[RMDB]
The record gives the reactivity of an RNA of 177 nucleotides to 2A3. It was measured as part of the RMDB library OK1LIB. The 2A3 profile rests on 386 reads. The reactions ran in a buffer of 150 mM KOAc, 10 mM MgCl2 and 150 mM bicine (pH 8.5), at 24 C.
RNA sequence: GGGAACGACUCGAGUAGAGUCGAAAAGGCGUCCGCGUAUCUCACAACUUCCGCCGCUGCCACCUGAUCAUCAAACUGCGGCAAUGGCUCGUUUAGGAUAUGCAUGGCAAAGGCAGCGUACUGUAACCUCAGGGUGCCACUUCGGUGGCACCCUGAGAAAAGAAACAACAACAACAAC
Reactivity to 2A3 in 0.01 (KOAc 150mM, MgCl2 10mM, bicine 150mM(pH8.5), 24C), signal-to-noise 1, nucleotides 027 to 126: g020g040c000g030u030c060c000g080c030g030u140a000u000c000u010c030a110c000a000a120c090u100u000c000c000g010c010c000g000c040u000g080c030c000a100c000c000u040g080a140u000c000a010u010c000a090a000a210c040u000g020c020g000g000c000a000a280u230g020g000c060u020c000g180u180u000u190a170g000g080a060u090a060u100g000c020a010u060g000g000c050a040a040a030g000g000c020a020g050c090g030u040a190c110u040g060u130a060a040c000